Chemical mapping of a 177-nucleotide RNA with 2A3 and DMS.
Source: RMDB library OK1LIB, as collected in RNAgym.
2A3 adducts were read by reverse transcription with SuperScript II with manganese.
The 2A3 profile rests on 1,585 reads.
[RMDB]
RNA sequence: GGGAACGACUCGAGUAGAGUCGAAAAGUCCGGGACGAAAGUCAGGACAAGUCGCUCAGGACGAAUAAUAGUCCGAAGACAAGAGCAGAGGCCGAAUAAAUAAAGGUCUCAAGGUUGGAAACAGCCAGCAUUGAGUAUGGUUCGCCAUACUCAAUGCAAAAGAAACAACAACAACAAC
Reactivity to 2A3 in 0.01 (KOAc 150mM, MgCl2 10mM, bicine 150mM(pH8.5), 24C), signal-to-noise 2, nucleotides 027 to 126: g020u050c040c000g100g300g000a020c010g020a110a020a000g020u020c000a000g000g000a010c000a020a070g030u070c060g040c100u030c050a050g050g000a030c010g020a060a000u290a160a050u020a050g000u050c000c010g000a010a000g000a010c060a010a040g030a040g010c110a030g020a000g000g000c010c000g040a100a000u120a100a040a010u080a030a040a020g010g010u000c010u000c000a000a010g010g000u010u010g030g020a050a020a000c000a000g000c000c040a000
Reactivity to DMS in 0.01 (KOAc 150mM, MgCl2 10mM, bicine 150mM(pH8.5), 24C), signal-to-noise 3, nucleotides 027 to 126: g010u000c000c030g000g020g000a030c000g000a120a070a120g000u000c000a300g030g010a080c020a050a130g050u040c050g040c070u000c050a170g000g000a060c000g000a120a200u050a100a110u010a120g010u000c020c000g000a080a160g000a070c140a160a080g000a070g000c040a150g020a010g000g000c000c010g000a140a200u010a060a050a200u030a020a160a080g000g020u000c030u000c020a040a020g010g000u000u000g000g000a080a120a090c000a030g050c100c060a050